The record gives the reactivity of an RNA of 177 nucleotides to DMS and 2A3.
The RNA was probed in 150 mM KOAc, 10 mM MgCl2 and 150 mM bicine (pH 8.5) at 24 C.
For DMS the reverse transcriptase was MarathonRT.
Values cover nucleotides 27 to 126.
RNA sequence: GGGAACGACUCGAGUAGAGUCGAAAAGAUAUGGAGUUCAAGUCAUCCGUUGAUCUGUUCUCGGAAACGAGAACAGGGAGGAUCCUUUGAGACUCCUAAGUCAAACACCCAACGUUCGCGUUGGGUGGACGAUCUUAUGGUUCGCCAUAAGAUCGUCAAAAGAAACAACAACAACAAC
Reactivity to DMS in 0.01 (KOAc 150mM, MgCl2 10mM, bicine 150mM(pH8.5), 24C), signal-to-noise 3, nucleotides 027 to 126: g000a020u000a160u000g000g000a020g010u000u000c110a050a050g010u010c130a030u000c000c000g020u000u030g010a010u010c000u010g000u010u000c000u000c000g000g000a030a030a060c000g000a000g000a010a010c010a000g000g000g000a010g000g000a010u000c130c030u000u020u010g010a180g000a040c010u000c000c000u000a030a080g000u000c020a130a170a300c010a030c000c000c000a000a010c000g000u000u020c300g010c000g020u010u000g000g000g030u000g000
Reactivity to 2A3 in 0.01 (KOAc 150mM, MgCl2 10mM, bicine 150mM(pH8.5), 24C), signal-to-noise 5, nucleotides 027 to 126: g020a000u030a020u050g000g010a000g010u030u060c060a040a040g060u110c080a060u000c030c010g110u200u020g010a010u000c010u000g000u010u010c000u010c000g020g010a030a020a000c010g000a000g000a000a000c000a000g000g000g000a010g000g000a030u080c010c030u160u150u250g300a300g050a050c000u010c010c000u000a020a000g020u000c020a050a080a060c020a000c000c000c000a000a000c010g070u110u110c300g000c000g180u000u000g010g000g000u000g020